[RMDB]
RNA sequence: GGGAACGACUCGAGUAGAGUCGAAAAGCGUACUACGAGGCCAUAAGGCAACAGCCUAAUAUUGGCGAUUCCCAAAUAGGAAUCGCAGGUUAGGACAUGCCUUUAAGCCUCGUAUCGCAAAGCAUUGUAUGGUACGUUCGCGUACCAUACAAUGCAACCCACAGACCAUCUUCGGAUGGUCUGUGGGAAAAGAAACAACAACAACAAC
Reactivity to 2A3 in 0.01 (KOAc 150mM, MgCl2 10mM, bicine 150mM(pH8.5), 24C), signal-to-noise 1, nucleotides 027 to 156: g010c010g020u090a110c050u010a000c020g010a010g000g000c030c000a040u020a100a030g000g020c000a080a080c040a200g000c000c000u020a040a000u220a170u190u250g210g000c010g000a000u000u030c000c020c000a090a220a140u230a070g020g000a010a000u010c010g030c020a020g090g000u000u020a010g000g010a090c060a220u050g010c020c000u000u020u060a000a000g000c000c030u010c000g000u000a000u000c010g040c020a000a070a050g010c000a030u000u000g010u000a000u000g010g020u030a040c000g000u080u100c260g000c030g150u010a000c020c000a000u010a010c000a000a000u000g010c010a000a010
Source information:
Structure probing data (2A3) for a 207-nucleotide construct. The reactions ran in a buffer of 150 mM KOAc, 10 mM MgCl2 and 150 mM bicine (pH 8.5), at 24 C. Values cover nucleotides 27 to 156. The data come from the RNA Mapping Database (RMDB), library RNAMAK. 2A3 adducts were read by reverse transcription with SuperScript II with manganese.